Conditions: 150 mM KOAc, 10 mM MgCl2 and 150 mM bicine (pH 8.5), 24 C. Structure probing data (2A3 and DMS) for a 177-nucleotide construct. Values are in units of 0.01, from 0 to 300, in steps of 10. DMS adducts were read by reverse transcription with MarathonRT. Values cover nucleotides 27 to 126. The DMS profile rests on 19,411 reads. Source: RMDB library OK1LIB, as collected in RNAgym.
RNA sequence: GGGAACGACUCGAGUAGAGUCGAAAAACACCUAUUUCUAUGAACAUCCUGGUCUGAGAAAUCUCAUUGAAAUAGAUGCCACUAUUAAACAGCAGGUUCGUAUCAGGAUUGUCGAACAUCUGAACGAAUACCUAUUUAGUUUCGACUAAAUAGGUAUAAAAGAAACAACAACAACAAC
Reactivity to 2A3 in 0.01 (KOAc 150mM, MgCl2 10mM, bicine 150mM(pH8.5), 24C), signal-to-noise 9, nucleotides 027 to 126: a000c040a030c000c000u010a030u010u020u000c020u020a020u020g010a040a020c020a060u020c000c010u070g040g080u150c100u210g130a080g100a190a160a100u070c040u000c020a030u020u070g020a010a020a010u020a010g040a040u100g100c010c020a080c030u100a110u250u220a170a190a080c060a040g110c020a030g060g000u010u000c010g010u030a040u080c000a000g030g020a050u010u070g020u020c020g000a010a000c010a080u080c020u030g040a060a030c060g050a110
Reactivity to DMS in 0.01 (KOAc 150mM, MgCl2 10mM, bicine 150mM(pH8.5), 24C), signal-to-noise 7, nucleotides 027 to 126: a160c080a050c030c000u000a020u000u000u000c010u010a020u000g000a030a070c100a050u000c010c010u010g000g020u040c180u020g010a110g010a120a100a090u040c050u010c040a020u000u010g000a040a040a020u000a010g000a050u000g010c040c020a090c130u030a090u050u040a070a090a110c140a090g020c130a040g000g000u000u000c020g000u000a090u010c000a010g000g000a050u010u010g010u010c030g010a030a060c050a060u030c000u000g010a090a080c190g020a120